[RMDB]
RNA sequence: GGGAACGACUCGAGUAGAGUCGAAAAGAUAUGGAUCGGCAGGUGAGCAACAGCCACAGUCGGAAACGACUGUGGACAUGCUCCCUGCGAUCCUAAGUCAAAACAUUCUGGGUUCGCCCAGAAUGAAGGUUGUAACAUUCUUCGGAAUGUUACAACCAAAAGAAACAACAACAACAAC
Reactivity to 2A3 in 0.01 (KOAc 150mM, MgCl2 10mM, bicine 150mM(pH8.5), 24C), signal-to-noise 1, nucleotides 027 to 126: g020a000u080a000u180g010g010a020u000c050g300g050c030a000g000g050u280g220a010g000c030a040a180c070a220g060c030c010a000c000a000g020u020c010g000g030a050a080a050c030g000a000c000u020g000u000g000g000a000c010a020u060g010c010u000c020c000c000u010g010c010g010a000u020c010c000u000a070a020g040u060c050a000a010a090a150c000a010u030u000c000u000g000g100g000u090u090c280g130c040c000c000a000g010a000a000u010g000a050a060
Reactivity to DMS in 0.01 (KOAc 150mM, MgCl2 10mM, bicine 150mM(pH8.5), 24C), signal-to-noise 2, nucleotides 027 to 126: g020a040u000a300u000g030g000a010u000c000g020g040c000a000g010g010u060g010a030g010c030a070a050c280a300g010c010c000a000c000a000g010u000c000g000g000a090a130a280c000g000a010c000u000g010u000g000g000a020c080a080u000g010c000u000c000c000c000u000g010c000g020a010u000c000c000u000a010a070g000u000c060a100a080a240a300c050a030u000u000c000u000g000g000g020u000u000c300g000c000c000c000a010g030a000a000u000g000a070a090